Chemical mapping of a 177-nucleotide RNA with DMS.
DMS adducts were read by reverse transcription with MarathonRT.

RNA sequence: GGGAACGACUCGAGUAGAGUCGAAAAGAAGGCCCAGGGCCAAGGAGCCGGCACCUUCAACAUCGGACCCACGUCGGGUAUUGUCAAGUUGGCCAAGGAGUUGGACUUUGAGGAUCUGCGACAGCCGGAUGACAUGCGUGUUCGCACGCAUGUCAUCAAAAGAAACAACAACAACAAC
Reactivity to DMS in 0.01 (KOAc 150mM, MgCl2 10mM, bicine 150mM(pH8.5), 24C), signal-to-noise 1, nucleotides 027 to 126: g000a090a100g040g000c100c030c030a080g000g000g000c030c030a060a260g000g000a090g010c020c030g000g020c030a030c010c020u000u010c050a040a010c080a060u010c080g000g000a070c010c000c010a090c280g010u010c200g030g000g040u000a040u000u000g030u020c200a060a080g020u010u000g000g020c170c090a070a040g020g020a050g020u000u000g000g000a130c010u010u010u010g020a300g000g000a030u010c010u000g030c070g010a080c160a120g020c050c070g000
Values cover nucleotides 27 to 126.